[RMDB]
RNA sequence: GGGAACGACUCGAGUAGAGUCGAAAAUAAAAUAGCGUACUAGAGACGCUGAUCUGUAGAUAACUACGAACUCUAGAGAUACGGUCCAAUUGAAUACAAGGACAGUUGGACCUAUUCGUAGAAAAAAUGGUAAUGAAAUCUUCGGAUUUCAUUACCAAAAAGAAACAACAACAACAAC
Reactivity to DMS in 0.01 (KOAc 150mM, MgCl2 10mM, bicine 150mM(pH8.5), 24C), signal-to-noise 1, nucleotides 027 to 126: u020a050a140a110a100u000a020g020c000g000u000a080c000u000a030g020a020g000a060c000g000c000u010g040a090u010c060u000g000u000a040g030a160u000a080a160c000u010a000c010g040a000a110c020u010c010u010a000g000a300g020a030u010a020c270g030g000u000c000c000a020a000u020u000g000a090a220u000a120c300a020a090g000g040a300c000a000g040u000u000g000g000a000c000c000u000a050u000u010c010g010u000a050g000a000a070a050a050a070a090
Source information: Conditions: 150 mM KOAc, 10 mM MgCl2 and 150 mM bicine (pH 8.5), 24 C. Chemical mapping of a 177-nucleotide RNA with DMS. The DMS profile rests on 711 reads.